An RNA of 177 nucleotides, treated with 2A3 and DMS and read out base by base. It was measured as part of the RMDB library OK1LIB. The RNA was probed in 150 mM KOAc, 10 mM MgCl2 and 150 mM bicine (pH 8.5) at 24 C. The 2A3 profile rests on 671 reads. For DMS, 922 sequencing reads were counted. Values cover nucleotides 27 to 126.
RNA sequence: GGGAACGACUCGAGUAGAGUCGAAAAUGCUCUGCGGGCCGCACUCACACGCCGAUGAAAGGGCUGAGGGGAGCACCAACACGCAGAUGACCCCAUGAAAUAUAAACGAUGUGCGGACACAUGGAGGCAGGGUCAUGCCUUUCGAGGCAUGACCCUGAAAAGAAACAACAACAACAAC
Reactivity to 2A3 in 0.01 (KOAc 150mM, MgCl2 10mM, bicine 150mM(pH8.5), 24C), signal-to-noise 2, nucleotides 027 to 126: u210g010c010u000c000u030g010c000g000g050g080c000c010g140c060a020c000u000c000a020c000a000c070g010c030c030g100a220u180g070a230a080a000g160g000g000c050u150g020a030g000g000g000g120a010g010c010a020c030c000a080a020c090a010c000g060c000a000g000a020u140g070a200c000c000c000c000a020u150g040a010a150a070u290a110u160a140a050a000c060g040a060u040g050u050g010c000g030g000a000c000a000c000a140u060g070g000a020g080g100
Reactivity to DMS in 0.01 (KOAc 150mM, MgCl2 10mM, bicine 150mM(pH8.5), 24C), signal-to-noise 1, nucleotides 027 to 126: u040g060c100u000c030u010g000c000g050g000g000c020c050g090c080a000c000u000c000a190c140a150c200g000c000c000g070a130u000g000a170a040a300g000g000g000c000u000g000a100g010g000g030g010a100g000c000a280c020c020a130a000c000a200c070g020c110a050g000a020u000g000a260c000c000c000c120a020u100g010a080a260a130u000a200u000a070a200a300c170g000a010u030g090u000g020c000g010g000a100c100a020c050a000u060g050g000a010g040g000